[RMDB]
The record gives the reactivity of an RNA of 177 nucleotides to DMS. DMS adducts were read by reverse transcription with MarathonRT. The reactions ran in a buffer of 150 mM KOAc, 10 mM MgCl2 and 150 mM bicine (pH 8.5), at 24 C.
RNA sequence: GGGAACGACUCGAGUAGAGUCGAAAAGAAACGUAGAAAUUUUUGGGUUUUCAAGAACGACAAUCCGGUGAACCCCUAUGCUGCUUCGUUCGAGAGAAGGCUGGCGAUUAAAAAACGCGACGUCGCCUCCUAGCGUUACAUUCGUGUAACGCUAGGAAAAAGAAACAACAACAACAAC
Reactivity to DMS in 0.01 (KOAc 150mM, MgCl2 10mM, bicine 150mM(pH8.5), 24C), signal-to-noise 1, nucleotides 027 to 126: g000a040a060a090c060g000u000a110g010a130a050a080u000u000u010u000u000g030g000g010u000u000u020u010c040a070a160g000a020a040c060g010a070c270a080a080u010c060c100g000g000u010g010a180a120c080c000c000c070u000a060u010g000c050u010g010c030u000u000c040g020u010u000c040g000a210g000a110g000a070a060g020g010c030u010g010g010c020g000a070u010u010a010a000a100a050a060a030c150g010c040g000a130c220g010u010c050g020c030c020